[RMDB]
The record gives the reactivity of an RNA of 177 nucleotides to 2A3 and DMS. Conditions: 150 mM KOAc, 10 mM MgCl2 and 150 mM bicine (pH 8.5), 24 C.

RNA sequence: GGGAACGACUCGAGUAGAGUCGAAAAGAUAUGGAUAUGAUGGAGCGAUAAGCUCCCAUCGGAAACGAUGGUGAGCUUUUGACGCUCCGCAUAUCCUAAGUCAAAUCCCGGACUUCGGUCCGGGAAAGUAAUUUUAAUUCUUCGGAAUUAAAAUUACAAAAGAAACAACAACAACAAC
Reactivity to 2A3 in 0.01 (KOAc 150mM, MgCl2 10mM, bicine 150mM(pH8.5), 24C), signal-to-noise 1, nucleotides 027 to 126: g030a000u020a020u080g000g020a010u010a010u030g190a190u220g040g000a020g000c050g120a200u060a300a010g000c010u000c040c010c020a000u000c000g010g000a020a000a000c020g010a000u000g010g020u080g030a000g000c000u090u000u060u170g290a130c050g000c000u020c010c010g000c000a020u010a000u000c000c000u010a040a000g000u000c030a040a000a230u100c010c000c000g000g000a020c020u050u020c300g150g010u000c010c050g010g000g000a000a000a010
Reactivity to DMS in 0.01 (KOAc 150mM, MgCl2 10mM, bicine 150mM(pH8.5), 24C), signal-to-noise 2, nucleotides 027 to 126: g000a030u000a120u020g000g010a020u000a010u000g000a080u010g030g000a020g010c000g030a110u000a010a010g010c000u000c010c010c000a000u000c010g000g000a040a020a040c010g010a000u000g000g000u010g020a020g020c000u000u010u010u010g000a210c120g020c000u000c000c010g010c000a000u000a010u000c000c000u010a010a060g000u010c000a100a180a190u000c000c000c000g000g010a010c000u000u030c180g020g010u000c000c010g020g010g010a000a010a050